[RMDB]
RNA sequence: GGGAACGACUCGAGUAGAGUCGAAAAGAUAUGGAAUGUCGUGGCUAGCUCAAUAUCGGAAACGAUAUAGAGCUUGGACCCAUCAUUCCUAAGUCAAAAUCGGGUUUUGCUUCGGCAAAACCCGAAACGUAGACAGCUAGUUCGCUAGCUGUCUACGAAAAGAAACAACAACAACAAC
Reactivity to DMS in 0.01 (KOAc 150mM, MgCl2 10mM, bicine 150mM(pH8.5), 24C), signal-to-noise 1, nucleotides 027 to 126: g010a020u000a250u010g000g020a030a030u000g010u020c260g010u020g100g080c050u010a080g000c010u010c000a080a020u000a000u000c020g000g000a030a070a170c000g010a000u020a010u000a130g010a000g000c000u010u010g000g000a080c140c000c010a060u000c010a020u000u000c000c000u010a030a100g000u000c000a150a040a210a150u000c010g030g000g020u000u000u000u000g010c000u000u010c250g020g010c010a000a010a020a000c000c000c000g000a000a000a060
Reactivity to 2A3 in 0.01 (KOAc 150mM, MgCl2 10mM, bicine 150mM(pH8.5), 24C), signal-to-noise 2, nucleotides 027 to 126: g000a000u030a020u090g000g040a000a000u020g030u300c300g180u300g010g050c190u170a110g000c000u000c000a010a020u000a000u010c010g030g020a050a010a040c000g000a010u000a000u020a070g020a020g000c000u010u180g040g060a030c040c000c000a030u060c020a000u000u000c000c000u020a030a010g050u040c000a020a000a020a300u100c000g000g000g000u000u000u020u040g030c020u080u170c300g090g000c000a010a010a010a010c000c010c000g000a000a000a000
This 177-nucleotide RNA was probed chemically with DMS and 2A3.
DMS adducts were read by reverse transcription with MarathonRT.
For 2A3, 1,754 sequencing reads were counted.
The RNA was probed in 150 mM KOAc, 10 mM MgCl2 and 150 mM bicine (pH 8.5) at 24 C.
The DMS profile rests on 1,129 reads.